The data come from the RNA Mapping Database (RMDB), library M2RFPK. Structure probing data (DMS and 2A3) for a 207-nucleotide construct.

[RMDB]
RNA sequence: GGGAACGACUCGAGUAGAGUCGAAAAUCCGACGAGCUGAACGCUUUCGAAGGAAAGCUUGACCAGCUAAUCUUCUGCAACGCCAUGACGAGGACUGCCCUUAGAGGCUCAUGGCGAUAGGUCACCCAAAACUAUUUGAGGUUCGCCUCAAAUAGAACCUAUAUGCGUCGUUCGCGACGCAUAUAGGAAAAGAAACAACAACAACAAC
Reactivity to DMS in 0.01 (KOAc 150mM, MgCl2 10mM, bicine 150mM(pH8.5), 24C), signal-to-noise 1, nucleotides 027 to 156: u000c020c060g020a100c050g000a070g050c000u000g020a050a120c200g000c000u000u000u000c040g020a210a190g020g010a020a020a000g020c000u020u020g020a150c140c020a100g030c010u000a080a080u000c060u010u010c060u000g040c050a190a120c000g000c010c010a010u000g000a040c050g000a220g020g020a040c040u000g000c020c020c010u010u000a170g010a170g060g050c040u000c010a030u000g000g010c040g000a040u010a000g010g010u010c050a150c060c010c000a120a110a070a180c020u000a000u000u010u000g000a000g000g000u000u000c300g030c020c010u000c010a010a010a040u000a000g010a060a100
Reactivity to 2A3 in 0.01 (KOAc 150mM, MgCl2 10mM, bicine 150mM(pH8.5), 24C), signal-to-noise 4, nucleotides 027 to 156: u020c020c030g030a040c060g030a020g010c020u090g090a150a030c070g010c010u060u090u070c050g050a090a050g070g020a060a080a010g000c010u040u080g030a040c030c000a000g010c000u030a070a090u070c070u150u020c060u140g070c070a060a080c000g000c010c000a000u010g000a010c040g060a130g100g100a110c090u130g010c000c000c010u070u160a120g030a160g160g010c050u010c000a000u010g000g010c000g000a030u060a020g000g000u030c030a030c010c030c000a010a090a040a070c000u000a000u000u000u010g000a000g010g020u030u100c230g080c060c000u000c000a000a000a000u000a000g000a010a040
The RNA was probed in 150 mM KOAc, 10 mM MgCl2 and 150 mM bicine (pH 8.5) at 24 C. Reactivities are given for positions 27 through 156. For DMS, 2,140 sequencing reads were counted.